[RMDB]
Annotation
The record gives the reactivity of an RNA of 177 nucleotides to 2A3. The 2A3 profile rests on 524 reads. 2A3 adducts were read by reverse transcription with SuperScript II with manganese.
RNA sequence: GGGAACGACUCGAGUAGAGUCGAAAAUAAGGAGCCCGACCAACCCUUGUGAUUGGCGUGGGGGGGCGCUAACGUAACUGUCUGUAACGUUCGAUACAGAACUGGCGCCGGGGUGCGGCCGCGACUCGCCGAAAAGACGUUUCGACGUCUUUUCGGCAAAAGAAACAACAACAACAAC
Reactivity to 2A3 in 0.01 (KOAc 150mM, MgCl2 10mM, bicine 150mM(pH8.5), 24C), signal-to-noise 1, nucleotides 027 to 126: u190a000a040g120g020a040g000c010c010c000g000a060c020c000a020a100c000c000c040u060u040g110u040g130a240u070u080g080g030c070g000u090g040g000g000g000g000g040g030c020g000c100u040a000a080c120g180u070a030a030c080u080g030u120c020u110g030u040a090a120c010g100u140u060c060g040a000u000a060c000a060g090a100a010c000u020g030g000c000g010c000c000g020g020g020g000u050g000c050g010g000c040c010g040c010g060a130c000u060c080